[RMDB]
Structure probing data (DMS and 2A3) for a 177-nucleotide construct. Source: RMDB library OK2TST, as collected in RNAgym. Conditions: 150 mM KOAc, 10 mM MgCl2 and 150 mM bicine (pH 8.5), 24 C. For 2A3 the reverse transcriptase was SuperScript II with manganese.
RNA sequence: GGGAACGACUCGAGUAGAGUCGAAAACUAAAAAAGCGUUACACAGCCCGGGGAAUCAUGGUGGCUGGUGUCGCGCUGCUGGCUGCUUGGCUGGUUGGUGGGGUCACUCUCAUGGACUUGGGCAGGACGUAUCGGAGGUAUUCGUACCUCCGAUACGAAAAGAAACAACAACAACAAC
Reactivity to DMS in 0.01 (KOAc 150mM, MgCl2 10mM, bicine 150mM(pH8.5), 24C), signal-to-noise 1, nucleotides 027 to 126: c060u020a000a060a090a090a060a020g000c040g040u000u000a090c050a080c040a040g010c020c030c000g000g050g000g000a160a110u020c100a090u000g010g030u000g060g000c050u020g010g010u000g010u000c060g000c030g020c010u000g000c100u010g030g000c060u000g020c140u010u000g010g020c020u000g010g020u000u010g030g010u000g040g010g000g010u000c060a080c080u000c050u010c060a120u000g010g010a040c090u000u000g010g010g010c030a070g010g030a170
Reactivity to 2A3 in 0.01 (KOAc 150mM, MgCl2 10mM, bicine 150mM(pH8.5), 24C), signal-to-noise 1, nucleotides 027 to 126: c040u170a060a080a030a100a030a040g100c030g080u070u050a070c000a000c030a060g030c000c000c000g000g000g070g050a190a110u280c090a070u090g190g040u170g040g040c060u020g100g150u050g080u010c000g020c030g020c020u010g000c010u000g080g000c020u050g000c000u160u240g030g000c010u000g040g060u040u090g040g000u030g000g050g000g010u040c000a010c000u170c010u020c030a030u070g050g010a000c050u030u040g000g000g000c020a070g050g050a000